[RMDB]
RNA sequence: GGGAACGACUCGAGUAGAGUCGAAAAGAUAUGGAAUUCUCGAGCUACGGUCGGAAACGACCGAAUAGCGAUGAGAGAUUUCCUAAGUCAAAAGACACCUGGAAGAGUUCGCUCUUCCAGGUGUCAAGAAUUUCAUGAAGUUCGCUUCAUGAAAUUCAAAAGAAACAACAACAACAAC
Reactivity to DMS in 0.01 (KOAc 150mM, MgCl2 10mM, bicine 150mM(pH8.5), 24C), signal-to-noise 1, nucleotides 027 to 126: g000a060u010a300u000g000g000a040a000u000u000c000u000c000g010a220g010c040u000a040c000g000g010u020c010g010g010a050a130a190c010g020a010c010c000g030a000a050u000a000g020c000g010a160u000g000a270g000a030g000a020u000u000u000c010c020u020a050a240g000u000c020a050a050a230a300g000a030c000a000c010c000u000g000g040a030a010g000a050g070u010u020c240g000c000u000c000u000u010c010c020a000g000g000u000g000u000c000a000a100

Annotation
The record gives the reactivity of an RNA of 177 nucleotides to DMS. Values are in units of 0.01, from 0 to 300, in steps of 10. The DMS profile rests on 662 reads.